[RMDB]
RNA sequence: GGGAACGACUCGAGUAGAGUCGAAAACGCACUCGCAGCUUAAUAACCUGCGCUGAGCCCUUCUCCCCCAGCUUGCCUGUGUCCUAGGGAAUUUGAAGGUCAUCCUUCACAGGAUCGUGUGGAAGUCAUUACUCGUGAGUGUUCGCACUCACGAGAACGAAUGGGUAUCGUUCGCGAUACCCAUUCGAAAAGAAACAACAACAACAAC
Reactivity to 2A3 in 0.01 (KOAc 150mM, MgCl2 10mM, bicine 150mM(pH8.5), 24C), signal-to-noise 2, nucleotides 027 to 156: c060g020c020a100c010u030c010g010c000a000g000c010u050u020a060a000u060a030a030c000c020u000g080c000g010c170u040g020a030g020c000c000c030u140u130c150u030c000c030c000c000c020a020g040c020u030u070g020c000c020u040g020u020g020u030c000c040u070a060g000g040g110a060a100u130u070u170g020a010a050g030g000u070c030a110u190c030c020u020u050c000a030c000a050g030g010a080u080c080g010u040g010u010g070g000a010a040g070u010c030a100u070u190a070c020u000c000g000u010g000a010g000u000g010u100u020c120g030c090a000c000u020c020a000c000g000a000g010a010a020
Reactivity to DMS in 0.01 (KOAc 150mM, MgCl2 10mM, bicine 150mM(pH8.5), 24C), signal-to-noise 2, nucleotides 027 to 156: c090g020c040a140c030u000c040g000c050a060g020c030u020u020a130a170u010a160a120c240c000u010g000c020g030c130u000g020a130g020c010c010c020u010u000c030u000c040c020c010c020c010a040g000c060u000u010g030c030c010u010g010u000g000u000c050c030u010a080g030g010g000a060a120u020u010u000g010a130a050g000g000u020c080a140u010c030c020u000u000c040a080c090a070g020g000a070u010c100g020u010g020u000g000g000a120a300g010u000c060a120u000u000a110c020u010c000g040u000g000a020g000u000g000u020u010c300g030c000a020c000u000c000a010c010g010a010g010a010a120